[RMDB]
RNA sequence: GGGAACGACUCGAGUAGAGUCGAAAACAGGUUUGUUCGCAAACCUGAAAAAAACCUUUGUGGACAUGAGAUAUAAGUGGACAGCCCAUUGGGCUGUCGUAACAUCUUAUUUCUCAACAGCCACUCUGGUAAAAAACGUUUGAUUCGUCAAACGUAACACACUACACACAUUCGUGUGUGUAGUGUGAAAAGAAACAACAACAACAAC
Reactivity to DMS in 0.01 (KOAc 150mM, MgCl2 10mM, bicine 150mM(pH8.5), 24C), signal-to-noise 2, nucleotides 027 to 156: c020a020g000g010u000u000u000g010u000u000c290g060c020a020a020a030c000c040u000g000a000a000a040a110a110a100a040c000c000u010u000u020g040u000g010g030a060c060a300u010g000a040g000a020u000a010u000a010a020g040u000g010g000a040c030a020g000c000c000c020a300u000u010g070g040g040c000u010g000u000c000g020u010a020a080c120a090u000c020u000u000a020u000u000u000c000u020c000a000a050c050a170g010c010c010a010c000u000c030u000g020g000u020a000a040a070a060a080a030c000g020u010u000u010g000a070u000u000c260g000u000c020a010a000a010c020g030u000a050a230
Reactivity to 2A3 in 0.01 (KOAc 150mM, MgCl2 10mM, bicine 150mM(pH8.5), 24C), signal-to-noise 4, nucleotides 027 to 156: c000a000g000g010u000u020u040g030u060u110c190g020c170a000a000a000c000c010u000g030a140a000a000a000a000a000a000c020c000u030u010u010g010u010g000g020a070c090a180u050g010a010g000a000u010a000u000a030a000g000u020g050g000a000c010a000g020c000c030c130a300u140u290g000g000g000c000u000g000u000c000g000u040a020a020c020a150u110c010u000u000a000u000u080u000c000u000c000a030a040c050a020g020c000c000a000c000u000c010u000g000g000u060a120a040a020a000a010a040c010g000u010u000u010g020a030u040u060c160g060u010c170a000a010a000c000g060u060a090a000